[RMDB]
RNA sequence: GGGAACGACUCGAGUAGAGUCGAAAAACAAUGGUUAACUAAUCUAUAUUUUUAUUUGAGUUGAAUAACUUCCAAAUACAAAAUAUAGGGUUAGUCUAUCCAUUUCUAUAAAUCAGUGUACAUGUCAGGAAUAUCCAAUCUUCGGAUUGGAUAUUCCAAAAGAAACAACAACAACAAC
Reactivity to 2A3 in 0.01 (KOAc 150mM, MgCl2 10mM, bicine 150mM(pH8.5), 24C), signal-to-noise 1, nucleotides 027 to 126: a000c030a000a010u020g000g010u050u060a000a010c000u000a010a010u060c000u000a000u000a000u000u000u050u000u000a030u000u000u010g070a120g030u070u050g070a260a130u220a300a070c010u050u010c040c000a000a000a000u030a020c060a020a040a020a000u000a000u000a030g050g020g000u000u000a000g000u000c010u040a050u060c020c040a020u060u020u040c160u070a280u060a130a300a040u150c060a080g060u050g100u150a150c120a230u100g090u150c040a030
Source: RMDB library RFM100, as collected in RNAgym. The record gives the reactivity of an RNA of 177 nucleotides to 2A3. As a SHAPE reagent, 2A3 marks flexible, mostly unpaired nucleotides at the ribose 2'-OH. For 2A3 the reverse transcriptase was SuperScript II with manganese.